[RMDB]
RNA sequence: GGGAACGACUCGAGUAGAGUCGAAAACUUACUUCGGUAAGGGGUUUUCCUAAGUCUAUCCGAGAGAGGAUAAGCAACAGCUGUCUCGGAAACGAGACAGACAUGCUUAUCCCUCUCGUUUGACGAUAGAUAUGGAGAUAGGGGACUUCGGUCCCAAUUUACCAAAUAACUUCGGUUAUUUGGUAAAAAAAGAAACAACAACAACAAC
Reactivity to 2A3 in 0.01 (KOAc 150mM, MgCl2 10mM, bicine 150mM(pH8.5), 24C), signal-to-noise 2, nucleotides 027 to 156: c000u000u020a010c000u010u100c230g130g000u040a010a030g070g010g030g010u000u040u130u000c000c000u010a140a010g030u000c020u010a020u040c050c030g000a010g000a000g020a100g000g000a000u000a000a000g000c000a000a090c000a140g050c010u000g000u010c000u000c000g050g000a030a040a040c000g000a000g000a010c000a000g050a000c010a040u030g020c010u000u010a000u000c000c000c000u010c000u000c000g000u010u020u030g060a010c010g000a000u010a000g020a000u070a060u160g060g020a040g030a060u210a250g000g010g050g000a010c000u060u060c300g120g000u000c000c000c000a000a000
Reactivity to DMS in 0.01 (KOAc 150mM, MgCl2 10mM, bicine 150mM(pH8.5), 24C), signal-to-noise 3, nucleotides 027 to 156: c010u000u010a000c050u010u010c300g050g010u000a030a030g010g010g000g020u000u010u010u000c000c010u000a050a270g010u000c010u000a040u000c000c020g020a050g010a030g010a170g030g010a060u000a010a020g000c030a040a090c050a230g010c010u000g020u000c000u000c010g020g000a110a080a210c000g020a030g010a000c000a010g010a020c060a300u010g010c030u000u000a030u010c010c020c010u000c000u000c000g010u010u000u000g020a130c080g010a050u010a010g000a030u010a300u000g000g010a090g020a130u010a140g010g020g030g020a050c030u000u000c190g040g010u010c000c010c000a000a020

Structure probing data (2A3 and DMS) for a 207-nucleotide construct. Values cover nucleotides 27 to 156. For 2A3 the reverse transcriptase was SuperScript II with manganese. For 2A3, 1,990 sequencing reads were counted. The reactions ran in a buffer of 150 mM KOAc, 10 mM MgCl2 and 150 mM bicine (pH 8.5), at 24 C. It was measured as part of the RMDB library RNAMAK.